[RMDB]
About this RNA: Structure probing data (2A3 and DMS) for a 207-nucleotide construct. Source: RMDB library OK3TST, as collected in RNAgym.

RNA sequence: GGGAACGACUCGAGUAGAGUCGAAAAUGGAAAGCAUACAACGGCACCGAGUUCGCGCCGAGCGCGAGGUUCGCUACUCCUCAGCAGCAGGGAAUCGUCGCUGCGCGCAUCAUCACCCGCAACCCUAGCGGAUCUGAUUGGGGCGCAGGACUUCCCGAUAUGUAGAACCAUUCGUGGUUCUACAUAUAAAAGAAACAACAACAACAAC
Reactivity to 2A3 in 0.01 (KOAc 150mM, MgCl2 10mM, bicine 150mM(pH8.5), 24C), signal-to-noise 5, nucleotides 027 to 156: u140g030g020a100a080a020g070c040a050u110a120c060a160a050c070g040g010c040a020c060c030g030a070g040u080u060c040g000c020g000c080c160g090a070g010c030g000c030g010a020g000g060u070u110c070g010c070u050a050c020u040c000c010u070c040a070g020c020a020g000c040a040g010g000g040a030a020u140c130g000u000c040g000c300u010g010c010g000c020g000c010a100u080c000a000u000c000a040c010c000c010g010c010a060a170c040c030c040u040a030g000c000g020g000a030u050c060u030g020a040u090u150g000g000g050g000c000g000c000a000g000g010a000c000u000u000c020c000c000g010
Reactivity to DMS in 0.01 (KOAc 150mM, MgCl2 10mM, bicine 150mM(pH8.5), 24C), signal-to-noise 2, nucleotides 027 to 156: u000g000g000a060a040a110g010c040a110u000a110c070a070a110c040g030g000c010a090c030c000g010a120g020u000u000c050g030c050g010c030c030g020a070g050c030g000c030g020a070g010g020u000u000c060g000c030u000a050c040u000c060c090u010c090a090g020c100a090g070c020a160g010g010g020a050a030u000c090g020u010c040g010c030u000g040c010g030c030g020c060a080u010c040a030u010c010a040c030c000c000g030c030a060a100c080c100c090u000a080g020c010g020g000a030u000c050u010g010a050u000u010g040g020g010g030c020g010c010a050g000g000a060c040u000u000c000c020c010g000

Description: 2A3 adducts were read by reverse transcription with SuperScript II with manganese. The reactions ran in a buffer of 150 mM KOAc, 10 mM MgCl2 and 150 mM bicine (pH 8.5), at 24 C.